[RMDB]
RNA sequence: GGGAACGACUCGAGUAGAGUCGAAAAGAUAUGGACGAUGCUUCGCACACUCCAGGACAUGAGUUUACAUUCGGAAACGAAUGAAAGCUCAACAGCCUGGAGUGUGCGAAGCCGCUCGUCCUAAGUCGUAUACCUAGAUGUUCGCAUCUAGGUAUACAAAAGAAACAACAACAACAAC
Reactivity to DMS in 0.01 (KOAc 150mM, MgCl2 10mM, bicine 150mM(pH8.5), 24C), signal-to-noise 4, nucleotides 027 to 126: g000a110u010a300u010g000g000a020c010g010a010u010g000c000u000u000c010g000c000a000c010a010c000u000c010c000a010g020g000a030c100a160u010g000a030g010u000u000u000a100c000a010u000u000c000g020g010a130a110a270c000g000a020a000u000g010a050a050a080g000c000u000c010a020a040c230a210g000c010c010u000g000g000a000g030u010g010u000g000c010g010a010a000g000c020c060g000c040u000c000g020u000c000c010u010a010a100g010u010c110
This 177-nucleotide RNA was probed chemically with DMS. The reactions ran in a buffer of 150 mM KOAc, 10 mM MgCl2 and 150 mM bicine (pH 8.5), at 24 C. DMS adducts were read by reverse transcription with MarathonRT.